[RMDB]
RNA sequence: GGGAACGACUCGAGUAGAGUCGAAAAGAUAUGGACUUGAAGAUGUCUAACCGAGUCGGAAACGACUUAGGUAAUCAUCCAAGUCCUAAGUCAAACUCACUACUCUGGUUCGCCAGAGUAGUGAGAAUCUAUGAGGCUAGUUCGCUAGCCUCAUAGAAAAAGAAACAACAACAACAAC
Reactivity to DMS in 0.01 (KOAc 150mM, MgCl2 10mM, bicine 150mM(pH8.5), 24C), signal-to-noise 3, nucleotides 027 to 126: g000a030u020a260u000g010g000a020c000u000u000g000a200a180g000a010u000g000u000c190u010a110a030c000c000g000a010g030u000c000g020g000a080a060a140c020g000a000c000u000u000a010g020g010u000a070a150u000c000a020u000c010c010a010a030g020u000c000c000u000a030a050g000u000c030a120a090a200c000u000c000a010c010u000a000c010u000c010u000g010g000u000u010c230g020c010c000a000g000a010g000u000a000g010u020g000a000g000a060a040
Reactivity to 2A3 in 0.01 (KOAc 150mM, MgCl2 10mM, bicine 150mM(pH8.5), 24C), signal-to-noise 2, nucleotides 027 to 126: g020a010u070a040u130g000g000a000c020u040u030g090a160a090g000a120u040g070u120c110u170a040a010c010c000g000a000g010u000c000g000g000a020a030a020c020g010a000c010u020u030a190g000g020u040a050a180u130c000a000u010c010c010a010a000g000u000c000c000u000a050a000g020u000c010a000a060a140c000u010c000a010c010u000a000c000u000c000u020g080g000u080u070c210g060c150c000a000g000a000g010u000a000g010u010g010a000g000a000a010